[RMDB]
RNA sequence: GGGAACGACUCGAGUAGAGUCGAAAAAAUAACACUUAUUUGCAUUCUUAUCAUGCCGGCAGCUCUCCCUUAAACACUGUUUCUACUACUACUCCUUUACUCUAAGUUUCCACGGGAAGAUAUUAACAGGUUUUGUUACUUUCGAGUAACAAAACCUAAAAGAAACAACAACAACAAC
Reactivity to DMS in 0.01 (KOAc 150mM, MgCl2 10mM, bicine 150mM(pH8.5), 24C), signal-to-noise 1, nucleotides 027 to 126: a010a000u020a090a030c080a080c150u000u000a110u000u000u060g000c100a000u030u000c000u000u000a090u000c080a020u000g100c030c070g000g140c070a100g000c000u030c020u000c000c000c000u010u020a100a150a020c080a070c050u100g010u000u000u000c010u000a090c080u020a110c060u010a050c150u000c000c000u020u000u020a050c070u020c090u020a130a120g000u020u000u000c000c000a150c210g000g000g020a070a040g000a180u040a000u030u000a120a090c300
Reactivity to 2A3 in 0.01 (KOAc 150mM, MgCl2 10mM, bicine 150mM(pH8.5), 24C), signal-to-noise 2, nucleotides 027 to 126: a000a000u210a030a010c010a010c060u090u060a140u130u070u110g010c040a030u070u030c020u050u050a050u240c020a000u070g010c000c000g110g000c030a040g000c000u030c010u000c020c000c000u040u100a000a030a000c010a010c090u020g130u080u000u040c030u000a030c000u010a000c000u000a000c020u010c000c000u000u080u090a080c020u050c020u020a130a070g010u020u040u000c000c060a010c000g020g000g140a070a070g060a060u160a120u130u040a080a040c000